[RMDB]
RNA sequence: GGGAACGACUCGAGUAGAGUCGAAAAAAGCAUCUUAUGAUACUAAUCUUAAUAAGUUCAAUAGAGCUAGUUUGCGUCAAAUUUUUGACGUAGCCCCCAUUGAACUCGAAAAUAAAUUCACACCUUUAGCCGUAUAAGUUCGCUUAUACGAAAAGAAACAACAACAACAAC
Reactivity to 2A3 in 0.01 (KOAc 150mM, MgCl2 10mM, bicine 150mM(pH8.5), 24C), signal-to-noise 9, nucleotides 027 to 129: a000a000g040c030a090u020c020u060u120a060u140g050a030u020a100c020u070a090a090u090c030u100u100a100a060u130a240a040g010u000u000c000a020a020u020a060g020a000g010c000u020a040g100u050u120u080g000c000g000u000c030a050a100a160u180u190u020u020u030g000a000c000g000u000a010g010c000c000c010c000c010a010u000u070g020a010a000c030u020c100g080a040a020a050a070u210a030a080a040u160u120c070a070c010a040c080c020u070u050u080a040g050c030
Reactivity to DMS in 0.01 (KOAc 150mM, MgCl2 10mM, bicine 150mM(pH8.5), 24C), signal-to-noise 9, nucleotides 027 to 129: a050a020g050c040a020u020c020u010u000a050u060g000a000u010a080c040u010a080a060u020c080u000u070a090a120u030a110a030g020u000u000c000a020a130u000a040g000a090g040c060u000a000g050u000u090u020g010c000g030u030c000a020a040a240u020u030u060u010u010g000a040c030g040u010a030g000c030c020c020c000c060a020u030u030g040a030a040c030u010c090g020a080a040a050a060u020a050a080a090u030u040c140a060c110a070c080c030u030u020u040a070g040c110